The record gives the reactivity of an RNA of 177 nucleotides to 2A3. The reactions ran in a buffer of 150 mM KOAc, 10 mM MgCl2 and 150 mM bicine (pH 8.5), at 24 C. It was measured as part of the RMDB library OK1LIB. For 2A3 the reverse transcriptase was SuperScript II with manganese.
RNA sequence: GGGAACGACUCGAGUAGAGUCGAAAAUCAUAUCACUAUCAUAUCAAAUCAAGCCAUUGCUGCUUUCAUAUCAGUUAAUUAACUACCAUCUAUCAUCAUUUCAGGUAGUUUACAGUUUGAUAGAUGCAUCCAGGCCUCGAUUCGUCGAGGCCUGGAUAAAAGAAACAACAACAACAAC
Reactivity to 2A3 in 0.01 (KOAc 150mM, MgCl2 10mM, bicine 150mM(pH8.5), 24C), signal-to-noise 2, nucleotides 027 to 126: u200c000a140u000a150u180c060a000c150u030a010u150c120a300u060a030u080c080a070a000a000u000c000a000a000g130c000c000a120u100u020g000c010u090g030c060u090u300u120c090a140u080a150u230c050a000g000u010u180a130a000u060u110a070a020c000u000a060c010c010a030u040c000u240a210u060c100a020u060c090a170u200u140u300c030a000g000g050u000a000g030u020u020u020a000c000a010g000u000u000u000g020a000u000a040g000a010u170g090c000